[RMDB]
RNA sequence: GGGAACGACUCGAGUAGAGUCGAAAAAGCGUGCUAAGCAUCAUCGUGAAUAUGAUUACAGCGCCUGCGAUGGCAUAUAACCGUAUUGCGGAUGGAGCGUCACGUGAGGACUGUGAAGCACAAUGCGGACGUUAUCUUCCUUCGGGAAGAUAACGUCAAAAGAAACAACAACAACAAC
Reactivity to DMS in 0.01 (KOAc 150mM, MgCl2 10mM, bicine 150mM(pH8.5), 24C), signal-to-noise 2, nucleotides 027 to 126: a140g000c090g000u000g000c070u000a140a080g000c000a080u010c000a010u000c000g000u040g000a050a050u010a000u000g000a050u000u000a020c100a010g000c110g030c000c000u000g040c270g020a110u060g000g000c010a080u040a100u000a040a010c040c010g000u000a020u000u000g000c030g030g050a060u000g000g000a100g000c020g000u000c040a010c010g050u010g010a110g000g000a160c060u030g000u010g030a090a100g000c050a030c040a090a130u000g000c040g020
Reactivity to 2A3 in 0.01 (KOAc 150mM, MgCl2 10mM, bicine 150mM(pH8.5), 24C), signal-to-noise 4, nucleotides 027 to 126: a000g030c020g000u010g000c010u040a050a020g020c000a060u020c000a020u040c000g070u070g220a100a030u110a010u130g060a060u040u090a030c020a010g010c030g020c080c010u020g020c020g210a220u070g060g000c050a010u080a030u040a190a030c030c000g030u020a100u080u180g050c010g040g050a090u060g050g040a070g080c020g020u020c020a010c020g030u040g130a070g010g010a020c010u040g010u020g050a030a030g030c030a000c040a010a040u180g030c030g060